[RMDB]
Conditions: 150 mM KOAc, 10 mM MgCl2 and 150 mM bicine (pH 8.5), 24 C. Structure probing data (DMS and 2A3) for a 177-nucleotide construct. The data come from the RNA Mapping Database (RMDB), library OK2TRN.
RNA sequence: GGGAACGACUCGAGUAGAGUCGAAAAGAGAAGAAAGUGAUGCCUGCCAGAUGCGGCAAUUUCGAGCAAGCGCUUGACGGUAGGUUGCCCUUUAAGAUCGGCCAUGUCGAAAGGAUAAUUGGGCAAAAACGAAACACCUAUUCGUAGGUGUUUCGUUAAAAGAAACAACAACAACAAC
Reactivity to DMS in 0.01 (KOAc 150mM, MgCl2 10mM, bicine 150mM(pH8.5), 24C), signal-to-noise 3, nucleotides 027 to 126: g020a100g000a130a110g000a030a060a070g030u010g010a130u000g010c020c000u010g000c040c030a080g000a170u010g020c030g020g010c030a060a050u020u000u000c170g000a100g030c130a140a200g020c080g000c010u000u000g000a230c140g010g000u000a000g010g010u000u000g010c030c030c000u000u000u000a060a120g010a110u010c050g010g010c010c110a050u000g000u000c020g010a040a080a170g000g000a090u000a020a050u000u010g030g000g010c050a020a040a060
Reactivity to 2A3 in 0.01 (KOAc 150mM, MgCl2 10mM, bicine 150mM(pH8.5), 24C), signal-to-noise 2, nucleotides 027 to 126: g040a060g060a100a060g090a010a170a040g110u080g070a090u150g020c000c020u000g000c020c000a000g000a040u050g060c000g040g030c050a040a030u110u150u230c060g020a030g060c100a180a030g170c020g040c130u070u080g060a040c010g000g030u020a020g000g000u020u050g020c020c000c030u020u050u040a150a060g050a070u010c040g000g050c040c040a090u200g050u070c020g010a200a030a000g090g010a060u090a100a040u110u020g030g000g010c050a020a020a020